[RMDB]
RNA sequence: GGGAACGACUCGAGUAGAGUCGAAAAUUUACUUGACACAUAUGUCGGUAAUCACCUCCUGAAAACAGUGGCACUAAAUGAUACACUUGAGAGCUACGGUGUCGAUGGAGUCAUCUCUGGUGUUCGGUGGGAUGAACAAGAAGCCCGUGCUAAAGAGCGGAUCUAUUAAAUUCGUUUAAUAGAUCCGAAAAGAAACAACAACAACAAC
Reactivity to DMS in 0.01 (KOAc 150mM, MgCl2 10mM, bicine 150mM(pH8.5), 24C), signal-to-noise 3, nucleotides 027 to 156: u000u000u000a020c000u010u030g050a060c010a180c200a170u000a120u010g020u000c010g020g000u000a030a030u010c110a120c110c020u010c010c010u000g000a110a080a070a090c060a070g020u010g030g020c040a120c050u000a050a080a140u010g010a180u010a110c060a070c010u000u010g000a120g000a100g020c000u000a040c020g000g020u010g010u000c070g000a170u010g020g000a060g020u000c020a080u000c020u000c010u020g020g020u000g020u000u010c090g000g000u010g010g000g020a110u010g010a080a160c070a040a150g000a080a150g000c010c020c040g020u000g000c050u000a070a100a110g010a200g000
Reactivity to 2A3 in 0.01 (KOAc 150mM, MgCl2 10mM, bicine 150mM(pH8.5), 24C), signal-to-noise 8, nucleotides 027 to 156: u010u000u020a020c020u150u300g020a000c040a020c040a170u170a140u300g000u010c000g000g000u010a010a030u050c050a080c020c020u050c010c020u070g080a060a070a050a020c060a050g040u060g040g000c020a000c060u100a070a100a100u150g060a050u070a090c050a020c040u060u080g040a050g010a010g090c030u060a020c050g040g050u080g070u140c050g030a060u110g040g030a040g060u030c030a080u000c020u000c010u040g050g030u070g060u100u100c050g030g010u060g010g010g010a030u070g030a090a040c040a070a070g070a050a010g020c010c000c000g030u020g020c020u100a150a040a020g040a030g030

The record gives the reactivity of an RNA of 207 nucleotides to DMS and 2A3.
DMS adducts were read by reverse transcription with MarathonRT.
The 2A3 profile rests on 6,315 reads.
The data come from the RNA Mapping Database (RMDB), library OK3TST.
The DMS profile rests on 5,282 reads.